[RMDB]
Structure probing data (DMS) for a 177-nucleotide construct. Conditions: 150 mM KOAc, 10 mM MgCl2 and 150 mM bicine (pH 8.5), 24 C. Source: RMDB library OK2TST, as collected in RNAgym. Values cover nucleotides 27 to 126.

RNA sequence: GGGAACGACUCGAGUAGAGUCGAAAAGGUUAAGUGGUGACAAACCCUCGAAAGAGGUGCUCUUUCAUCUGGCGCUGUAUCGCAACAAUCCGCGCUGUAAAGCGGUGGUGCAUUUGCACAGCACAUAAGGUCGCACUCAUUUCGAUGAGUGCGACCUAAAAGAAACAACAACAACAAC
Reactivity to DMS in 0.01 (KOAc 150mM, MgCl2 10mM, bicine 150mM(pH8.5), 24C), signal-to-noise 1, nucleotides 027 to 126: g010g020u010u000a050a170g060u000g030g000u000g030a080c170a020a100a140c050c000c010u000c000g010a100a030a180g010a060g000g010u010g000c030u000c050u000u000u000c090a020u000c030u000g000g000c070g000c000u000g000u000a090u000c220g050c000a010a050c060a140a280u000c000c000g010c020g000c120u010g010u030a020a170a050g000c010g000g040u010g030g000u020g020c210a090u000u000u020g020c050a050c000a000g020c000a000c110a080u030a040